[RMDB]
RNA sequence: GGGAACGACUCGAGUAGAGUCGAAAAGAUAUGGAUGUGAGCAGCUUUGAUCGCACGGUGUCGGAAACGACAUUGCGGGAGCUGGUCACAUCCUAAGUCAAAGAGUAUAAACUUCGGUUUAUACUCACGAGUGUAGAACGUUCGCGUUCUACACUCGAAAAGAAACAACAACAACAAC
Reactivity to DMS in 0.01 (KOAc 150mM, MgCl2 10mM, bicine 150mM(pH8.5), 24C), signal-to-noise 2, nucleotides 027 to 126: g010a040u000a060u020g000g000a020u010g010u010g000a020g000c000a010g010c000u000u010u030g000a020u010c010g000c010a060c300g030g000u000g000u010c000g030g020a020a000a040c000g020a020c000a010u000u010g000c000g000g010g000a000g030c000u010g000g000u000c000a010c000a000u000c000c000u000a000a060g000u000c010a140a110a160g010a020g010u000a000u000a000a010a020c000u000u010c240g010g000u010u000u000a010u020a000c000u000c000a050
Reactivity to 2A3 in 0.01 (KOAc 150mM, MgCl2 10mM, bicine 150mM(pH8.5), 24C), signal-to-noise 2, nucleotides 027 to 126: g020a010u040a010u080g000g000a010u020g020u020g010a060g160c010a010g030c020u300u300u070g000a030u020c000g000c010a020c140g230g000u090g000u030c010g020g000a000a010a010c000g030a010c000a020u000u050g000c010g030g010g010a020g030c010u020g000g000u000c000a010c000a000u000c000c000u000a000a000g000u010c030a080a150a130g000a000g000u000a000u010a040a010a000c000u040u080c300g030g010u000u010u000a010u000a000c020u000c000a010